[RMDB]
Source information: Chemical mapping of a 207-nucleotide RNA with 2A3 and DMS. For DMS, 3,370 sequencing reads were counted. DMS adducts were read by reverse transcription with MarathonRT. The reactions ran in a buffer of 150 mM KOAc, 10 mM MgCl2 and 150 mM bicine (pH 8.5), at 24 C. For 2A3, 4,361 sequencing reads were counted.
RNA sequence: GGGAACGACUCGAGUAGAGUCGAAAAGAAAGGGGAGUAGCGUCGGGAAACCGAAACAAAGUCGUCAAUUCGUGAGGAAACUCACCGGCUUUGUUGACAUACGAAAGUAUGUUUAGCAAGACCUUUCCAAACUUUGGACGCCUUCGGGCGUCCAAAGCACUACCGUAGUGUUCGCACUACGGUAGUGAAAAGAAACAACAACAACAAC
Reactivity to 2A3 in 0.01 (KOAc 150mM, MgCl2 10mM, bicine 150mM(pH8.5), 24C), signal-to-noise 2, nucleotides 027 to 156: g000a000a010a000g000g000g010g000a010g020u000a000g000c000g000u010c000g020g000g020a050a080a050c000c010g000a000a010a000c000a000a000a000g000u000c000g000u020c020a100a280u180u050c050g000u010g000a000g010g020a060a050a060c000u000c000a000c000c000g000g000c000u000u000u010g000u000u000g000a000c000a000u010a000c010g040a100a020a010g000u000a000u000g000u000u000u010a010g000c000a000a000g000a000c000c000u000u000u000c000c000a000a010a000c000u000u000u000g010g000a000c010g040c000c040u040u030c300g140g000g000c000g000u010c000c000a000a000a000g000
Reactivity to DMS in 0.01 (KOAc 150mM, MgCl2 10mM, bicine 150mM(pH8.5), 24C), signal-to-noise 2, nucleotides 027 to 156: g000a040a030a020g000g000g050g000a140g010u010a100g010c020g030u020c020g030g010g000a140a090a170c000c070g000a050a060a020c000a010a030a020g010u010c000g030u000c140a060a170u000u000c130g020u020g000a110g050g020a130a090a210c030u000c020a020c040c030g020g000c000u000u010u000g000u000u000g010a020c000a000u000a010c010g020a180a080a240g000u000a000u000g000u000u000u000a080g020c000a030a200g010a080c010c030u000u000u000c000c030a070a100a120c000u000u000u010g000g010a040c000g050c030c020u010u010c300g030g040g070c000g070u000c040c010a000a020a000g010